[RMDB]
RNA sequence: GGGAACGACUCGAGUAGAGUCGAAAAGACGCAAUACGCCGAAGGCGAUAACCUCGUCGGAAAAUUGCUCAAUCAUGCUGUCUAUGAAGAGGCGAGUAUGCUUGAAGAGGAGUAUCACCAUCAGCUAGGCUGGUAUCCUAUUCGUAGGAUACCAGCCAAAAGAAACAACAACAACAAC
Reactivity to 2A3 in 0.01 (KOAc 150mM, MgCl2 10mM, bicine 150mM(pH8.5), 24C), signal-to-noise 1, nucleotides 027 to 126: g030a000c050g070c080a000a080u080a100c130g000c100c010g160a100a050g040g060c060g040a060u040a030a020c000c000u000c000g110u040c060g030g150a110a070a000a050u080u050g000c040u020c000a000a000u030c020a000u030g000c000u010g000u000c020u060a140u120g090a080a050g030a000g160g000c010g040a030g000u000a000u060g010c010u020u080g020a100a050g010a010g030g030a030g090u030a010u080c060a040c020c000a030u130c010a010g040c020u080a080
Reactivity to DMS in 0.01 (KOAc 150mM, MgCl2 10mM, bicine 150mM(pH8.5), 24C), signal-to-noise 1, nucleotides 027 to 126: g010a150c230g040c120a080a060u000a080c130g020c030c010g000a080a110g090g040c020g000a040u010a080a140c070c040u000c000g010u010c110g000g000a020a050a140a070u010u000g010c040u000c050a150a300u000c040a070u000g000c130u040g000u010c110u000a040u040g040a060a090g000a170g010g000c040g010a100g010u000a020u000g020c030u000u020g020a070a040g000a030g000g010a140g000u000a010u010c010a040c010c010a090u020c020a100g030c020u000a180